The record gives the reactivity of an RNA of 177 nucleotides to DMS and 2A3. The reactions ran in a buffer of 150 mM KOAc, 10 mM MgCl2 and 150 mM bicine (pH 8.5), at 24 C. DMS adducts were read by reverse transcription with MarathonRT. For DMS, 1,458 sequencing reads were counted.
[RMDB]
RNA sequence: GGGAACGACUCGAGUAGAGUCGAAAAGACACGAGUUCCCGGAACAGACUCUCUCAACCGCCAAGUUUUGAAGGGACAAAAGUCCAAGUGCGCCUCACCACAAAAGGCGGAACAAAACAAAAGCAAAUGAGUACUAAUUGUUCGCAAUUAGUACUCAAAAAGAAACAACAACAACAAC
Reactivity to DMS in 0.01 (KOAc 150mM, MgCl2 10mM, bicine 150mM(pH8.5), 24C), signal-to-noise 2, nucleotides 027 to 126: g010a090c080a060c100g010a230g020u000u000c000c000c000g000g000a080a100c140a150g020a090c050u000c030u000c040u000c030a110a140c160c100g000c020c020a060a140g000u010u000u000u000g020a140a140g020g000g070a000c000a060a050a100a140g000u000c000c010a070a070g000u000g000c030g010c000c020u010c090a190c030c150a070c120a020a030a060a030g000g000c010g000g000a090a140c030a000a070a040a050c040a030a020a110a050g010c090a110a080a120
Reactivity to 2A3 in 0.01 (KOAc 150mM, MgCl2 10mM, bicine 150mM(pH8.5), 24C), signal-to-noise 1, nucleotides 027 to 126: g010a000c040a010c110g030a030g020u010u010c010c000c000g000g000a070a010c030a040g080a080c000u010c000u000c020u010c050a030a090c040c000g000c000c010a070a000g000u010u000u060u110g110a100a100g080g000g030a010c050a010a300a040a040g000u000c010c000a050a020g030u030g120c010g030c010c000u040c010a070c100c010a080c010a040a140a010a030g000g000c000g010g010a050a000c000a010a050a000a000c020a000a130a000a000g050c000a040a030a070